[RMDB]
RNA sequence: GGGAACGACUCGAGUAGAGUCGAAAAGAUAAAAUAAAUGGUAGUAUCUCUACUUUUUAGUAUUUGCUAAGAGUUACUUUGUGGCAUAGCAUAUGGUCUAUUUUAGAGAAGGAUUCAUGUGCUGCUGCUUGCAAUCAGAUUUCGAUCUGAUUGCAAGAAAAGAAACAACAACAACAAC
Reactivity to DMS in 0.01 (KOAc 150mM, MgCl2 10mM, bicine 150mM(pH8.5), 24C), signal-to-noise 2, nucleotides 027 to 126: g010a170u000a070a080a120a090u010a050a080a060u010g000g000u010a010g010u010a070u010c130u000c010u000a030c010u000u010u000u010u000a050g010u020a080u010u010u000g000c050u000a050a080g000a100g010u010u000a060c040u010u000u020g010u010g000g010c000a080u010a040g010c010a000u010a020u000g000g000u010c000u000a100u020u000u030u020a180g020a170g000a100a300g010g000a010u020u020c010a010u000g000u010g040c000u000g010c060u000g000
Reactivity to 2A3 in 0.01 (KOAc 150mM, MgCl2 10mM, bicine 150mM(pH8.5), 24C), signal-to-noise 2, nucleotides 027 to 126: g000a050u160a040a130a040a000u130a060a050a020u040g030g010u000a010g000u020a190u050c110u000c010u040a060c000u110u090u060u000u150a040g050u030a240u040u120u180g030c010u020a030a000g000a020g070u040u010a120c050u090u180u160g060u120g010g040c050a080u180a070g000c010a000u020a020u030g020g000u000c020u170a300u050u070u160u140a180g020a010g020a140a040g080g000a020u280u200c000a030u020g000u000g030c010u000g000c010u030g000